[RMDB]
RNA sequence: GGGAACGACUCGAGUAGAGUCGAAAAAGAGCAGACUUUAGAGCAUGUGAAAAGAGGCAUAGAAUAUUUUUGCCCAGGAGAUGGCCCUUUAUGGAGAGAUUUUGGCUAGUUGUAGAACACCCUCAAGGUACUCGAUAUUUGGGGAUAUGCCAGUGAAGAUAUUUAAAUGAUUCGUCAUUUAAAUAUCAAAAGAAACAACAACAACAAC
Reactivity to DMS in 0.01 (KOAc 150mM, MgCl2 10mM, bicine 150mM(pH8.5), 24C), signal-to-noise 2, nucleotides 027 to 156: a060g010a110g010c020a110g000a070c050u010u000u010a080g030a080g030c020a070u000g040u000g000a080a100a110a150g010a110g010g000c030a050u000a120g000a100a110u000a110u000u000u010u000u000g020c000c020c010a130g050g010a100g000a070u000g010g030c020c020c040u000u010u000a090u010g030g020a170g010a110g000a140u000u000u000u030g020g000c020u010a130g020u000u000g030u010a110g000a050a060c050a050c040c020c000u010c020a050a070g010g040u000a030c030u000c070g020a130u000a060u000u000u010g020g000g010g020a110u000a040u000g020c010c000a100g020u000g010a090a170
Reactivity to 2A3 in 0.01 (KOAc 150mM, MgCl2 10mM, bicine 150mM(pH8.5), 24C), signal-to-noise 3, nucleotides 027 to 156: a000g050a010g010c010a000g040a100c040u120u090u120a040g000a030g060c010a030u020g030u030g140a030a060a050a070g090a080g020g000c030a050u050a040g120a200a040u110a170u120u130u060u140u120g010c000c030c020a020g000g050a070g020a030u040g030g000c000c000c000u060u140u100a080u070g030g000a050g000a000g000a060u080u080u080u060g010g000c010u030a050g010u040u040g000u040a040g010a090a030c020a030c040c000c010u040c020a020a030g030g010u060a100c030u010c080g050a040u020a060u060u050u060g010g000g000g000a000u050a010u120g020c040c010a010g090u130g090a080a040